[RMDB]
RNA sequence: GGGAACGACUCGAGUAGAGUCGAAAACUGGUACCGUCAGCGCGGCGCGGUACUGAUCGCGCCACGUGCGCAUCGGCCGUACCGGCCCAUCAGCUGACGUGCGCGAUCGAUCUCGGCGCACGAUCGGACUCUUGCCUUCUUUCGAGAAGGCAAGAGUAAAAGAAACAACAACAACAAC
Reactivity to DMS in 0.01 (KOAc 150mM, MgCl2 10mM, bicine 150mM(pH8.5), 24C), signal-to-noise 2, nucleotides 027 to 126: c020u010g000g020u000a000c050c290g020u000c020a090g000c010g000c000g030g030c010g060c000g030g030u000a090c250u010g010a020u000c050g020c010g000c000c030a070c160g040u010g020c010g010c020a080u010c110g030g020c000c140g000u000a020c020c000g010g000c020c000c000a100u000c160a100g000c020u000g000a010c000g020u000g010c000g010c000g000a060u010c100g020a140u010c100u000c040g010g010c020g020c010a020c010g010a020u000c010g000g000
Reactivity to 2A3 in 0.01 (KOAc 150mM, MgCl2 10mM, bicine 150mM(pH8.5), 24C), signal-to-noise 2, nucleotides 027 to 126: c010u000g000g000u010a020c030c010g010u010c020a040g010c010g010c030g030g000c030g000c040g000g020u110a230c150u160g170a030u070c010g000c000g050c040c010a050c130g210u170g000c010g000c010a050u080c130g010g010c020c000g010u020a010c010c000g070g000c000c000c000a090u120c060a000g070c030u050g000a010c000g000u000g000c010g010c000g020a060u160c120g010a100u050c090u050c170g190g000c000g000c000a000c000g010a070u000c010g000g010
The data come from the RNA Mapping Database (RMDB), library OK2TRN.
Structure probing data (DMS and 2A3) for a 177-nucleotide construct.
The DMS profile rests on 1,792 reads.
The reactions ran in a buffer of 150 mM KOAc, 10 mM MgCl2 and 150 mM bicine (pH 8.5), at 24 C.
For 2A3, 3,456 sequencing reads were counted.
For 2A3 the reverse transcriptase was SuperScript II with manganese.
DMS adducts were read by reverse transcription with MarathonRT.